[RMDB]
RNA sequence: GGGAACGACUCGAGUAGAGUCGAAAAAGAUAUGGAACUCAUCGAUCUCGAGAUCGAAGAUGGCUACCCACCAGCCAUCGGAAACGAUGGCUGAGGCCAUUGUAGUCGAGGGAGAGUUCCUAAGUCAUCAGAAAAAAGUGUUCGCACUUUUUUCUGAAAAAGAAACAACAACAACAAC
Reactivity to DMS in 0.01 (KOAc 150mM, MgCl2 10mM, bicine 150mM(pH8.5), 24C), signal-to-noise 2, nucleotides 027 to 126: a110g000a100u020a300u000g000g020a030a020c000u010c000a300u020c160g000a050u020c000u000c000g020a100g010a100u010c180g020a070a300g030a000u000g000g020c000u010a050c040c020c020a300c120c030a020g000c030c000a010u000c010g000g000a140a090a160c000g000a000u000g000g000c000u000g060a100g010g000c000c000a010u000u000g000u000a160g000u000c000g010a080g000g000g000a040g020a070g000u000u000c000c010u000a010a090g000u000c070a200
Reactivity to 2A3 in 0.01 (KOAc 150mM, MgCl2 10mM, bicine 150mM(pH8.5), 24C), signal-to-noise 1, nucleotides 027 to 126: a000g050a020u090a030u130g000g000a020a030c010u000c020a080u300c130g030a040u000c020u000c030g100a080g000a200u300c140g100a040a100g040a040u010g000g000c020u090a240c070c030c030a010c000c000a000g000c040c000a010u010c040g010g000a070a050a000c040g000a000u020g000g030c000u010g000a010g000g000c020c000a010u000u170g030u170a080g120u030c000g000a010g030g000g020a070g000a000g000u010u070c000c010u010a140a020g070u040c040a110
Background:
An RNA of 177 nucleotides, treated with DMS and 2A3 and read out base by base. Reactivities are given for positions 27 through 126. Source: RMDB library TTRDES, as collected in RNAgym. Values are in units of 0.01, from 0 to 300, in steps of 10.